This 207-nucleotide RNA was probed chemically with 2A3.
The data come from the RNA Mapping Database (RMDB), library RNAMAK.
The reactions ran in a buffer of 150 mM KOAc, 10 mM MgCl2 and 150 mM bicine (pH 8.5), at 24 C.
Reactivities are given for positions 27 through 156.
The 2A3 profile rests on 1,726 reads.
[RMDB]
RNA sequence: GGGAACGACUCGAGUAGAGUCGAAAACCGUAGGCAUGAGAACUACCGAUCUGUGAAUCUUGGAUUUAUUCGUUCGAAAGAGCGAAUUGUCAGAUUCACAAGGAUCGGCUCAUGCCUAAACGGAAAACGGAUUUGGCGGUUCGCCGCCAAAUCCGAACUGAUGUGACUGAUUCGUCAGUCACAUCAGAAAAGAAACAACAACAACAAC
Reactivity to 2A3 in 0.01 (KOAc 150mM, MgCl2 10mM, bicine 150mM(pH8.5), 24C), signal-to-noise 1, nucleotides 027 to 156: c000c000g030u000a010g000g000c010a000u010g020a000g000a140a100c150u190a090c170c000g000a000u000c010u030g000u000g000a000a000u010c020u070u180g170g020a010u120u300u120a010u040u040c010g010u010u000c000g030a150a030a040g010a010g020c000g000a000a000u000u000g000u000c000a000g000a000u000u020c000a000c000a010a110g170g000a010u010c010g000g000c000u000c000a000u010g010c000c000u000a000a000a000c000g030g050a030a000a090a100c000g000g000a000u000u000u010g020g040c000g050g030u060u070c280g070c090c000g000c030c030a010a000a000u000c000c020g000a000a000